The record gives the reactivity of an RNA of 177 nucleotides to 2A3 and DMS. The DMS profile rests on 2,453 reads. The 2A3 profile rests on 1,683 reads. The data come from the RNA Mapping Database (RMDB), library M2PK90. High 2A3 reactivity points to a flexible backbone, as in loops and unpaired stretches. For 2A3 the reverse transcriptase was SuperScript II with manganese. The reactions ran in a buffer of 150 mM KOAc, 10 mM MgCl2 and 150 mM bicine (pH 8.5), at 24 C. For DMS the reverse transcriptase was MarathonRT.
[RMDB]
RNA sequence: GGGAACGACUCGAGUAGAGUCGAAAACACAUGCCAUCAUAUCGGUUAAGAACUCUUAACUCUGAUGGCUUUCGAGUUAUGUGGUGCAUUGAAGCUCUCCCUUCAAAUCAACGUACCGUUCCGUCAACAUUUAUAUCCGCUUCGGCGGAUAUAAAUGAAAAGAAACAACAACAACAAC
Reactivity to 2A3 in 0.01 (KOAc 150mM, MgCl2 10mM, bicine 150mM(pH8.5), 24C), signal-to-noise 2, nucleotides 027 to 126: c020a000c010a080u130g000c000c000a000u000c010a020u100a080u300c060g050g000u030u020a020a020g050a290a250c070u050c000u300u000a010a010c020u040c030u100g010a040u000g010g000c000u000u020u000c030g000a000g020u060u060a090u170g090u060g010g030u040g000c040a070u020u050g030a030a030g030c030u000c000u050c150c000c060u030u030c040a050a070a030u050c030a010a020c030g000u010a020c000c010g020u050u000c050c000g100u080c030a020a020
Reactivity to DMS in 0.01 (KOAc 150mM, MgCl2 10mM, bicine 150mM(pH8.5), 24C), signal-to-noise 3, nucleotides 027 to 126: c150a090c180a070u010g000c010c000a020u000c000a020u020a090u010c260g000g000u000u000a010a010g010a280a160c300u000c010u000u000a010a000c000u000c080u010g000a000u000g010g000c010u000u000u010c060g000a030g010u000u000a090u000g030u000g000g010u000g000c040a070u000u000g010a050a050g000c050u000c040u000c030c030c020u010u000c080a030a050a190u000c040a040a060c050g020u010a010c030c010g000u000u000c000c000g000u020c050a090a150